[RMDB]
RNA sequence: GGGAACGACUCGAGUAGAGUCGAAAAGGUCGCACCGCCAUUUGACGAACGAACGCCAAGCCUAAGCCGUCUUUGUGCAUUAAGUGGGUAAAGGUUGGUUAGUAGCGGUUUCCCCCACGACAAGGGGCUUCCUUUAAUAGUUCGCUAUUAAAGGAAGAAAAGAAACAACAACAACAAC
Reactivity to DMS in 0.01 (KOAc 150mM, MgCl2 10mM, bicine 150mM(pH8.5), 24C), signal-to-noise 7, nucleotides 027 to 126: g010g010u000c050g020c090a130c030c030g010c030c040a120u000u000u010g010a090c060g000a100a100c060g010a120a130c160g010c010c010a020a060g010c010c000u000a060a300g000c010c000g000u000c020u000u000u000g010u010g010c150a100u010u010a020a030g020u000g010g020g020u000a040a200a020g000g010u000u000g000g010u000u010a070g010u000a050g010c060g000g000u000u000u000c030c010c000c040c040a040c070g000a050c120a080a130g000g000g000g000
Reactivity to 2A3 in 0.01 (KOAc 150mM, MgCl2 10mM, bicine 150mM(pH8.5), 24C), signal-to-noise 5, nucleotides 027 to 126: g040g010u040c030g020c060a040c020c020g000c020c020a090u130u060u160g080a040c050g020a270a020c020g010a010a000c010g030c000c000a060a130g090c070c000u030a040a010g020c000c000g110u040c000u030u060u060g110u090g060c020a050u120u150a060a020g050u100g140g080g030u050a060a060a020g020g000u020u010g020g000u020u020a010g000u010a000g000c010g000g000u010u030u030c000c000c000c000c010a020c030g060a020c020a040a030g000g000g010g000